[RMDB]
RNA sequence: GGGAACGACUCGAGUAGAGUCGAAAAUUCAGGAGGGAUGACUAGUUCACUACUUCGGUUGAACUGGAGAUCCAGAUGUAUCUUCAACAGCCUAAUAGAAUAUAGUGGUGUCAGUGUUAGGGGAGCCCGUUGAUUCAACCUUCGGGUUGAAUCAACGAAAAGAAACAACAACAACAAC
Reactivity to 2A3 in 0.01 (KOAc 150mM, MgCl2 10mM, bicine 150mM(pH8.5), 24C), signal-to-noise 2, nucleotides 027 to 126: u120u110c020a030g000g000a010g020g050g040a030u100g030a070c000u070a050g140u120u190c030a020c020u170a060c000u160u020c020g040g000u020u000g000a150a090c010u000g000g000a050g000a000u030c080c000a000g030a180u230g110u140a010u000c000u000u020c020a280a290c000a160g000c020c010u140a110a040u100a190g140a100a060u250a030u080a130g000u000g130g010u060g080u030c040a060g030u000g090u190u050a020g000g000g000g070a000g040c050c000
Reactivity to DMS in 0.01 (KOAc 150mM, MgCl2 10mM, bicine 150mM(pH8.5), 24C), signal-to-noise 2, nucleotides 027 to 126: u020u000c020a090g020g010a100g000g000g000a160u010g020a060c030u000a090g000u050u000c010a030c050u000a020c270u030u030c190g010g000u000u000g000a080a060c070u020g000g000a020g000a010u000c040c130a090g000a180u120g010u030a010u000c010u000u000c020a000a090c030a060g030c030c040u030a140a180u030a120g000a120a050u000a120u030a060g000u000g000g000u000g000u000c100a020g000u000g020u000u000a080g040g020g000g040a090g030c080c060